[RMDB]
RNA sequence: GGGAACGACUCGAGUAGAGUCGAAAACUUUAGGGGCUGCCGCAUAGGGAUUGCUAAUGGAGGCAGCGUAGAAUACGGUCUGGCCAGCCAAAACAACUUCAGCGACUGCCAGAUUUGUUUCAAUGUGGUUGGAGGGAAUUGGACCAGAAGUGGAAACCUACUUCAUGCUGUUCGCAGCAUGAAGUAGAAAAGAAACAACAACAACAAC
Reactivity to 2A3 in 0.01 (KOAc 150mM, MgCl2 10mM, bicine 150mM(pH8.5), 24C), signal-to-noise 2, nucleotides 027 to 156: c020u100u210u210a130g000g070g030g030c020u010g040c090c000g040c040a040u050a030g110g020g150a140u110u180g010c040u050a170a090u070g080g040a030g010g000c010a000g000c010g010u010a000g010a030a030u080a070c050g010g020u000c000u000g020g010c100c030a000g020c100c070a060a120a060a040c070a060a000c000u160u070c030a050g080c020g210a120c000u050g040c020c030a040g030a050u020u040u250g000u000u020u020c020a050a020u110g010u020g010g080u040u110g010g010a060g030g060g010a060a150u150u030g010g000a010c000c030a010g020a120a000g090u100g000g010a020a050a000c130
Source: RMDB library OK3TST, as collected in RNAgym. The record gives the reactivity of an RNA of 207 nucleotides to 2A3. For 2A3, 501 sequencing reads were counted.